[RMDB]
RNA sequence: GGGAACGACUCGAGUAGAGUCGAAAAUGAAGUGCAUCCUGUUGCUGGCUGGUAAGCUUUUCAGCUUCGUCUUUCAGGCUUGCAAGAUCUGCUGAUUUUUCACCUUCAACCGCUGGACUGGAGCCUGGUAUCAACUCGGUUUCGACCGAGUUGAUACAAAAGAAACAACAACAACAAC
Reactivity to DMS in 0.01 (KOAc 150mM, MgCl2 10mM, bicine 150mM(pH8.5), 24C), signal-to-noise 2, nucleotides 027 to 126: u030g010a160a130g030u030g000c040a040u010c030c000u000g010u020u020g030c010u010g000g000c060u000g030g020u020a070a090g010c130u000u000u000u030c090a020g020c000u000u020c090g010u000c040u000u000u010c080a030g000g010c070u010u000g060c070a050a020g030a040u050c100u020g000c100u000g010a040u000u030u020u020u050c040a090c010c020u010u000c090a070a120c140c050g000c030u000g020g010a080c030u000g000g030a080g000c030c030u000g000
Reactivity to 2A3 in 0.01 (KOAc 150mM, MgCl2 10mM, bicine 150mM(pH8.5), 24C), signal-to-noise 5, nucleotides 027 to 126: u150g060a100a030g060u020g070c020a050u030c000c010u060g010u060u080g080c060u030g060g000c000u040g040g040u160a040a040g030c000u100u060u050u140c040a000g000c000u050u050c050g080u020c030u000u080u080c050a070g080g000c050u030u040g040c040a050a030g020a080u000c030u050g020c030u050g070a120u070u020u010u060u120c070a110c050c000u050u100c020a050a050c040c030g010c030u080g010g030a060c020u050g010g010a020g040c020c020u040g040
The record gives the reactivity of an RNA of 177 nucleotides to DMS and 2A3. The data come from the RNA Mapping Database (RMDB), library OK1LIB. The DMS profile rests on 2,916 reads. The reactions ran in a buffer of 150 mM KOAc, 10 mM MgCl2 and 150 mM bicine (pH 8.5), at 24 C.